[RMDB]
RNA sequence: GGGAACGACUCGAGUAGAGUCGAAAAAGAUGAGGAAACUGAGGCCCAGAGAGGGGAGAGCCACCUAGCGAGCUGGUGGCGGCUAGACCAGGAGAGCUGUCAUUCCAAGCAAGCAAAGGCAACGAGACUUAAGACCGCAAUUCGUUGCGGUCUUAAGAAAAGAAACAACAACAACAAC
Reactivity to DMS in 0.01 (KOAc 150mM, MgCl2 10mM, bicine 150mM(pH8.5), 24C), signal-to-noise 1, nucleotides 027 to 126: a040g020a070u030g010a090g010g010a090a100a080c090u000g020a120g010g000c050c040c040a070g000a140g010a160g000g020g030g000a070g010a150g010c020c050a080c050c090u000a120g000c060g000a230g000c030u000g010g000u000g030g030c020g040g020c000u010a060g020a130c110c070a040g030g000a070g000a040g020c020u000g020u000c030a060u000u000c050c030a010a130g020c060a060a140g030c070a020a050a100g030g050c070a060a070c130g000a120g010a170